[RMDB]
The record gives the reactivity of an RNA of 207 nucleotides to DMS and 2A3.
RNA sequence: GGGAACGACUCGAGUAGAGUCGAAAAAGUUAGGUUCGCUAUGGUGCAACUCUUUAAGGCAAUAACGAACUAAUUCUAAGCAAGUAAUGAAGAAAUGCCAGGGUCACUAUCUAGCCAUAAUAGUGCUGUAAGUGACUUAGAUUCGUCUAAGUCACAAGAUACACUUAUCCUUCGGGAUAAGUGUAUCAAAAGAAACAACAACAACAAC
Reactivity to DMS in 0.01 (KOAc 150mM, MgCl2 10mM, bicine 150mM(pH8.5), 24C), signal-to-noise 3, nucleotides 027 to 156: a080g030u000u000a050g050g020u000u000c020g030c050u010a040u010g010g020u000g020c030a130a120c130u000c120u000u000u000a060a090g020g010c020a090a050u000a040a060c030g010a030a060c010u000a040a060u000u000c060u000a100a090g010c050a050a120g020u010a090a090u000g010a100a070g000a080a060a130u000g020c000c030a100g020g000g010u000c010a030c020u000a050u000c060u000a090g000c030c050a060u000a060a110u000a060g020u010g010c030u000g030u000a100a140g040u000g010a040c000u010u000a000g010a040u000u000c300g000u000c000u010a000a010g000u000c000a000c010a020a060
Reactivity to 2A3 in 0.01 (KOAc 150mM, MgCl2 10mM, bicine 150mM(pH8.5), 24C), signal-to-noise 7, nucleotides 027 to 156: a000g090u070u050a060g010g080u020u010c020g020c020u030a010u040g130g030u080g050c070a130a130c070u060c060u120u190u180a090a050g030g010c020a040a040u090a080a040c050g020a020a020c020u030a030a040u080u060c050u100a070a020g060c070a070a050g060u150a080a090u180g070a030a100g040a060a080a020u050g010c020c020a020g000g000g030u040c010a010c020u010a030u100c020u030a020g020c010c000a010u040a130a070u060a100g060u040g030c070u050g050u100a190a060g000u000g000a000c000u000u000a000g000a000u020u040c110g010u000c140u000a000a000g000u000c000a000c000a000a010

The data come from the RNA Mapping Database (RMDB), library M2RFPK.
For 2A3 the reverse transcriptase was SuperScript II with manganese.
For DMS, 7,981 sequencing reads were counted.